[RMDB]
RNA sequence: GGGAACGACUCGAGUAGAGUCGAAAAGAAUGGAAAGGGAUUGUAGAGAUCAGUGUCGCAGCAUUCUCAAUUAGAUUGUAUAUGGUUACGUGCGACAGAUAGGCCGGGCUUCUACUGGUGCGAAGAAGGGUUUAUUUAACUUCGGUUAAAUAAACCCAAAAGAAACAACAACAACAAC
Reactivity to DMS in 0.01 (KOAc 150mM, MgCl2 10mM, bicine 150mM(pH8.5), 24C), signal-to-noise 4, nucleotides 027 to 126: g000a050a040u010g030g000a060a070a070g020g000g000a090u020u010g010u040a060g020a080g010a000u010c060a060g000u020g010u000c010g020c010a060g000c070a050u000u000c070u000c060a080a070u030u040a070g010a300u010u020g000u000a070u010a070u030g000g010u010u020a090c090g010u010g000c020g000a010c030a010g000a090u030a070g000g000c050c010g000g000g020c050u000u000c030u000a060c040u010g000g010u000g000c040g000a040a070g010a060a140
Reactivity to 2A3 in 0.01 (KOAc 150mM, MgCl2 10mM, bicine 150mM(pH8.5), 24C), signal-to-noise 2, nucleotides 027 to 126: g000a000a040u110g000g020a090a040a010g020g000g060a030u050u140g020u080a020g000a010g000a060u030c030a020g150u020g010u020c000g000c050a020g010c000a070u050u040c090u000c080a050a160u130u180a050g130a290u020u060g050u050a110u020a010u140g030g020u100u110a010c060g050u030g010c010g020a000c010a010g090a020u100a060g010g000c000c000g040g000g000c000u000u030c000u020a010c000u070g000g000u010g090c080g030a040a020g020a100a090